[RMDB]
RNA sequence: GGGAACGACUCGAGUAGAGUCGAAAAUGCUUUGGCUGACACUUUACAAACCCAUCCACUAGGGGUUGCCUUUUUAUUGGACACCAGAGCGGCCUUAUAUGCGAAGUGUAUCCGGGCAAGAGUUACAGCGUAGUGAGGAUUUCGAUCCUCACUACGCAAAAGAAACAACAACAACAAC
Reactivity to 2A3 in 0.01 (KOAc 150mM, MgCl2 10mM, bicine 150mM(pH8.5), 24C), signal-to-noise 3, nucleotides 027 to 126: u140g000c030u030u050u140g120g000c030u040g130a020c010a040c080u030u070u210a070c100a070a040a090c040c000c000a010u130c070c040a150c160u090a110g000g010g000g050u000u020g020c000c000u090u090u060u000u000a190u080u080g010g010a020c100a100c090c000a010g030a010g020c000g000g000c000c020u240u120a210u010a020u010g050c100g070a070a060g000u010g020u050a080u020c000c000g030g000g000c060a100a020g030a000g090u070u140a100c090a000
Reactivity to DMS in 0.01 (KOAc 150mM, MgCl2 10mM, bicine 150mM(pH8.5), 24C), signal-to-noise 1, nucleotides 027 to 126: u000g020c060u000u000u040g000g060c020u030g040a160c030a130c030u010u000u010a170c140a010a050a120c000c010c000a090u000c050c050a010c080u000a130g000g010g020g000u020u000g000c020c030u000u000u000u000u150a150u030u000g000g010a100c070a090c020c000a060g010a090g030c080g020g000c100c040u020u020a030u020a090u000g050c060g020a010a060g030u010g040u000a040u000c000c000g000g000g000c020a080a050g000a090g020u030u040a090c210a110